Record summary:
Chemical mapping of a 207-nucleotide RNA with 2A3. The reactions ran in a buffer of 150 mM KOAc, 10 mM MgCl2 and 150 mM bicine (pH 8.5), at 24 C.
RNA sequence: GGGAACGACUCGAGUAGAGUCGAAAACCGGGUAGUUUCCAACUCCGGCUGGUGUGAAGAAGGAGCCGUUCCACGCAGGACACGAACAAGAAGAAGCCGAAGCAACUUCAGGUCGCCGCGCACGUACUGUCGCUCGAUCUCCGCCUCGCUCGAGUAGCUACUGGUACUCGUUCGCGAGUACCAGUAGAAAAGAAACAACAACAACAAC
Reactivity to 2A3 in 0.01 (KOAc 150mM, MgCl2 10mM, bicine 150mM(pH8.5), 24C), signal-to-noise 2, nucleotides 027 to 156: c010c040g000g050g000u090a080g030u030u000u010c060c110a120a080c040u000c030c040g000g000c010u030g030g050u100g040u150g080a120a150g020a040a030g180g000a030g030c030c000g010u030u000c040c050a050c060g020c010a120g040g000a050c080a000c110g160a140a010c090a160a060g070a040a010g010a050a000g050c110c150g210a070a020g020c030a050a080c020u040u030c030a030g000g070u030c020g000c050c030g000c010g000c000a040c080g080u130a070c020u160g090u160c050g010c040u030c000g110a130u000c010u000c020c000g010c020c000u030c080g000c010u030c020g000a000g000u010a020g030